[RMDB]
The data come from the RNA Mapping Database (RMDB), library M2RFPK. The record gives the reactivity of an RNA of 207 nucleotides to 2A3 and DMS.
RNA sequence: GGGAACGACUCGAGUAGAGUCGAAAAGAUUCCUCGUUGUUGAGCGAGGUUUAAACAAAUCGACCACACAAACGUAGAGCCGACUACGGAUUUAUAAAUUAAGGCAUUAAAUGUGAUAAGGAGACAAAAAACGAUGUUGUGUUCGCACAACAUCGAAGAUUGGUCUUACGUUCGCGUAAGACCAAUCAAAAGAAACAACAACAACAAC
Reactivity to 2A3 in 0.01 (KOAc 150mM, MgCl2 10mM, bicine 150mM(pH8.5), 24C), signal-to-noise 3, nucleotides 027 to 156: g110a130u170u130c000c000u000c000g000u000u100g020u010u030g020a010g000c010g000a000g020g020u060u120u050a010a050a010c040a000a010a010u010c000g020a020c000c000a080c010a040c030a090a300a030c000g000u000a000g000a020g050c000c020g130a040c000u000a000c000g010g000a000u010u300u110a170u170a020a010a010u110u160a010a010g000g020c000a000u030u180a010a060a040u090g020u010g010a030u050a130a100g180g020a110g000a050c190a070a100a010a050a020a040c020g000a000u000g000u000u000g000u000g000u010u070c090g090c050a000c000a000a000c000a000u000c000g000a010a000
Reactivity to DMS in 0.01 (KOAc 150mM, MgCl2 10mM, bicine 150mM(pH8.5), 24C), signal-to-noise 2, nucleotides 027 to 156: g020a300u010u010c000c010u010c030g010u000u030g030u000u000g000a080g000c050g010a110g000g030u020u000u000a090a000a210c150a000a070a080u010c000g000a110c000c040a150c000a220c040a070a050a170c030g000u000a060g000a190g030c030c010g030a090c010u000a020c010g010g000a160u000u000u010a070u000a060a110a050u000u000a020a040g010g020c020a250u000u000a020a090a040u000g000u000g010a080u000a040a130g010g000a300g000a130c040a000a020a100a060a130a230c020g000a010u000g010u000u010g020u010g000u010u010c300g000c000a000c000a020a010c000a010u010c020g010a020a060

For 2A3 the reverse transcriptase was SuperScript II with manganese.